[RMDB]
RNA sequence: GGGAACGACUCGAGUAGAGUCGAAAAUCCACUAUGAAUCUAGUCACUAAAUAAACACAAUUAGCUACUGUGUGUAAUAGUGAUUGUUGAUAACACAAAAUAAUAGUAUAGUUUUGGAAGAUUAUACGCGCCCUUGCUCCGUUCGCGGAGCAAGGAAGGUCUUUAACAUGUUCGCAUGUUAAAGACCAAAAGAAACAACAACAACAAC
Reactivity to 2A3 in 0.01 (KOAc 150mM, MgCl2 10mM, bicine 150mM(pH8.5), 24C), signal-to-noise 3, nucleotides 027 to 156: u000c020c000a050c070u210a220u290g130a140a070u020c070u060a040g010u000c000a000c010u000a000a000a050u050a020a060a000c010a000c000a040a090u160u110a130g050c080u160a050c040u020g000u010g000u000g020u030a030a020u000a000g000u000g000a020u000u030g000u010u070g060a110u110a160a040c060a010c030a070a150a060a100u250a140a090u070a150g010u010a020u000a040g030u000u030u080u170g120g050a100a050g000a040u010u020a010u030a040c030g050c010g030c050c010c000u000u000g010c000u000c010c000g040u030u060c080g020c010g090g000a000g000c010a000a000g000g010a000a010
Reactivity to DMS in 0.01 (KOAc 150mM, MgCl2 10mM, bicine 150mM(pH8.5), 24C), signal-to-noise 1, nucleotides 027 to 156: u000c010c000a170c150u010a060u030g000a140a080u000c020u000a030g000u010c000a020c000u000a010a020a060u000a100a150a000c000a000c020a000a060u010u010a290g000c180u020a060c090u000g040u010g000u000g000u000a110a300u000a020g010u000g020a020u000u000g010u000u000g000a130u000a040a300c040a130c020a110a010a080a090u000a050a300u000a090g000u000a010u000a010g000u000u000u000u000g040g010a160a170g000a010u000u000a030u000a000c000g000c040g030c100c000c010u000u010g000c000u000c000c000g010u000u000c300g040c030g000g030a000g000c000a020a000g040g030a030a030